Chemical mapping of a 177-nucleotide RNA with 2A3 and DMS.
The reactions ran in a buffer of 150 mM KOAc, 10 mM MgCl2 and 150 mM bicine (pH 8.5), at 24 C.
2A3 adducts were read by reverse transcription with SuperScript II with manganese.

RNA sequence: GGGAACGACUCGAGUAGAGUCGAAAAGAUAUGGAAUCCCAGUACGAGCUCCAUCUCGGAAACGAGAUGUGAGCGAUGAGUACGGGAUUCCUAAGUCAAAACCACAAUUGGUUCGCCAAUUGUGGAACCAACUAAUUACGUUCGCGUAAUUAGUUGGAAAAGAAACAACAACAACAAC
Reactivity to 2A3 in 0.01 (KOAc 150mM, MgCl2 10mM, bicine 150mM(pH8.5), 24C), signal-to-noise 5, nucleotides 027 to 126: g000a000u010a000u050g000g000a000a010u000c000c000c020a010g000u010a000c080g070a060g010c000u000c010c000a010u000c000u010c000g000g010a000a000a000c010g000a000g000a020u030g140u290g040a010g000c010g000a010u030g000a010g000u000a010c000g010g000g000a000u000u000c000c000u000a000a000g000u000c000a010a020a070a210c000c000a000c010a010a010u010u010g050g050u080u100c300g040c120c000a010a000u010u010g000u000g000g000a000a020
Reactivity to DMS in 0.01 (KOAc 150mM, MgCl2 10mM, bicine 150mM(pH8.5), 24C), signal-to-noise 5, nucleotides 027 to 126: g000a010u000a010u010g000g000a020a000u000c000c010c010a130g030u010a010c000g000a030g020c000u000c000c010a010u000c000u000c000g010g000a010a010a020c000g010a010g000a010u010g010u010g010a010g030c000g010a030u010g010a180g010u000a010c010g000g010g000a010u000u000c000c000u000a000a050g000u000c000a120a080a150a240c010c000a010c000a000a010u000u000g000g010u000u010c300g020c000c000a010a010u000u000g020u000g000g010a030a090